The data come from the RNA Mapping Database (RMDB), library OK2TST. This 177-nucleotide RNA was probed chemically with DMS and 2A3. The RNA was probed in 150 mM KOAc, 10 mM MgCl2 and 150 mM bicine (pH 8.5) at 24 C. The DMS profile rests on 3,524 reads.

[RMDB]
RNA sequence: GGGAACGACUCGAGUAGAGUCGAAAACACGGCCGAGUUCGCAACCCAGUGACCUGCAUAGCGGCCUACGCGCGGUUACCGAGUGCACCGGCUCAGCGGUGGUCGUUCAUGUGGGCGGCGACAUCGACAUCGUUAGGGAUUUCGAUCCCUAACGAUGAAAAGAAACAACAACAACAAC
Reactivity to DMS in 0.01 (KOAc 150mM, MgCl2 10mM, bicine 150mM(pH8.5), 24C), signal-to-noise 3, nucleotides 027 to 126: c060a150c080g020g030c070c010g010a080g010u010u000c030g010c030a140a140c040c010c020a170g010u010g010a090c020c000u000g000c030a050u000a050g000c010g010g000c030c010u010a140c020g020c020g010c020g000g000u000u000a060c020c020g010a090g010u010g020c170a100c060c020g000g000c070u010c120a160g010c000g020g010u020g000g010u000c020g020u000u000c150a050u000g040u000g000g020g040c080g010g000c000g000a030c050a090u010c060g020a300
Reactivity to 2A3 in 0.01 (KOAc 150mM, MgCl2 10mM, bicine 150mM(pH8.5), 24C), signal-to-noise 3, nucleotides 027 to 126: c080a020c010g050g000c020c020g040a050g050u090u090c040g000c080a140a150c000c020c000a030g020u050g090a210c010c010u000g000c000a030u010a010g000c020g010g010c020c040u060a070c020g040c010g010c020g030g000u040u070a080c010c090g130a080g100u150g060c030a030c030c010g060g000c080u030c080a030g000c000g000g020u010g000g010u010c000g000u010u020c070a020u020g010u030g010g000g000c010g060g000c010g000a020c020a130u060c040g040a030